[RMDB]
RNA sequence: GGGAACGACUCGAGUAGAGUCGAAAAGUUGAACAGGAUGUGGCACCCUAAGAGGACGCAGGCAUACAAGGUUAUUACCCAGUCCUUGUAUGCCUGGUGUCCCCUUAGUGGGACGCAGGCCUAGGUAGCAAAAGUUCGGAGUUUCGACUCCGAACAACUUAGGAAAAAGCUUCGGCUUUUUCCUAAGAAAAGAAACAACAACAACAAC
Reactivity to DMS in 0.01 (KOAc 150mM, MgCl2 10mM, bicine 150mM(pH8.5), 24C), signal-to-noise 1, nucleotides 027 to 156: g000u010u010g010a110a120c050a130g000g020a300u010g020u000g020g010c030a130c010c010c020u000a040a030g010a050g010g020a000c020g030c010a010g030g080c000a010u020a010c010a040a010g010g000u000u000a140u010u000a260c160c210c060a300g020u010c000c010u000u000g000u000a020u010g020c040c010u020g020g010u000g020u000c000c010c000c000u000u000a020g000u010g020g020g010a040c040g020c040a050g000g010c010c010u000a100g020g040u010a150g010c150a050a110a130a110g000u000u010c000g030g020a000g040u000u010u000c280g010a140c000u000c000c000g020a010a010c020a010a020
Reactivity to 2A3 in 0.01 (KOAc 150mM, MgCl2 10mM, bicine 150mM(pH8.5), 24C), signal-to-noise 2, nucleotides 027 to 156: g060u050u050g010a060a030c010a050g000g020a010u020g030u030g050g010c200a190c010c000c000u000a010a010g000a010g000g000a000c000g000c020a000g000g020c010a000u000a000c000a000a000g020g020u100u170a120u130u160a220c000c050c050a050g090u060c010c000u000u000g000u000a000u000g000c010c000u000g000g020u000g000u000c000c010c000c000u010u020a000g010u300g000g000g000a000c000g010c000a010g140g090c000c000u070a060g080g090u050a030g020c030a100a040a020a020g010u000u000c000g000g000a010g000u040u080u090c090g110a030c000u000c000c000g000a000a000c000a000a000
The record gives the reactivity of an RNA of 207 nucleotides to DMS and 2A3.
The 2A3 profile rests on 1,236 reads.
2A3 adducts were read by reverse transcription with SuperScript II with manganese.